[RMDB]
RNA sequence: GGGAACGACUCGAGUAGAGUCGAAAAUAAAAUUUAAAAAGGAAAAGUUGGCUGGGCAUGGUGGCUCAUGCCUGUAAUCUCAACACUCUGGGAGGCUGAGGUGGGUGUAUCAAUUGAGGUCAGAGUUCGAGACCAGCCUGGGUAACAUGGUGAAACCACAUUACCAAAGAUUCGUCUUUGGUAAUGUAAAAGAAACAACAACAACAAC
Reactivity to 2A3 in 0.01 (KOAc 150mM, MgCl2 10mM, bicine 150mM(pH8.5), 24C), signal-to-noise 2, nucleotides 027 to 156: u020a000a030a000a020u040u180u210a060a050a000a040a040g020g020a020a110a040a100g030u080u040g050g000c040u080g010g000g030c030a060u060g020g010u020g030g000c010u030c060a030u050g010c000c020u000g000u030a040a090u040c030u000c060a000a100c020a010c040u040c050u030g010g070g020a030g050g000c090u070g030a020g020g090u080g010g040g000u040g020u060a110u070c060a030a060u100u190g070a010g000g060u020c040a030g020a000g070u070u100c070g030a020g010a070c030c000a000g030c000c010u020g030g030g050u030a050a020c010a090u110g000g000u020g060a020a000a000c000c040
Reactivity to DMS in 0.01 (KOAc 150mM, MgCl2 10mM, bicine 150mM(pH8.5), 24C), signal-to-noise 2, nucleotides 027 to 156: u010a010a090a090a190u000u000u020a010a040a060a070a060g010g000a100a100a090a160g000u010u000g020g030c060u000g000g000g030c000a050u030g020g020u010g030g050c100u000c020a020u000g000c010c000u000g020u010a010a060u000c030u000c040a050a030c060a060c060u000c060u000g000g020g000a060g000g010c030u020g020a080g010g040u000g010g010g020u000g000u010a040u000c040a070a120u010u010g000a100g020g010u000c050a070g010a120g020u000u010c140g000a120g000a040c020c040a060g000c020c010u000g000g010g010u000a040a050c030a060u000g010g000u000g000a070a040a070c050c050